This 177-nucleotide RNA was probed chemically with DMS and 2A3. The data come from the RNA Mapping Database (RMDB), library OK1LIB. 2A3 adducts were read by reverse transcription with SuperScript II with manganese. Reactivities are given for positions 27 through 126. High 2A3 reactivity points to a flexible backbone, as in loops and unpaired stretches.

RNA sequence: GGGAACGACUCGAGUAGAGUCGAAAAGUAAUGACACAAAGCUGGCGCAGAUAGUGAGUUUUAUUGCCAAAAACCUUGUAGUUUAGGAGGGUAGACACAGCGUACUGUCCAGUGGCUACGGCCAGCGGCACUCACCAUGGUUCGCCAUGGUGAGUGCAAAAGAAACAACAACAACAAC
Reactivity to DMS in 0.01 (KOAc 150mM, MgCl2 10mM, bicine 150mM(pH8.5), 24C), signal-to-noise 1, nucleotides 027 to 126: g000u000a090a010u000g010a040c100a050c020a020a080a110g020c030u000g000g000c090g010c030a070g000a060u010a050g000u050g000a090g000u000u030u010u010a030u000u020g030c050c050a090a160a000a050a090c020c030u000u000g020u010a110g000u010u000u060a260g030g030a080g030g060g000u000a020g000a050c150a090c140a180g000c030g000u040a060c000u000g040u090c000c000a060g000u010g000g040c040u000a020c120g000g000c000c000a010g010c040g040
Reactivity to 2A3 in 0.01 (KOAc 150mM, MgCl2 10mM, bicine 150mM(pH8.5), 24C), signal-to-noise 2, nucleotides 027 to 126: g120u130a000a300u110g040a000c000a000c000a070a120a000g070c000u000g000g000c130g010c050a050g010a150u230a070g160u070g000a030g030u030u030u030u030a210u060u200g160c060c020a120a140a000a000a000c010c050u110u260g030u120a110g030u080u190u000a050g030g020a090g000g030g000u010a000g010a060c050a000c020a180g030c020g040u050a120c050u060g110u060c010c030a070g090u000g160g000c000u010a000c080g070g080c030c030a000g000c000g000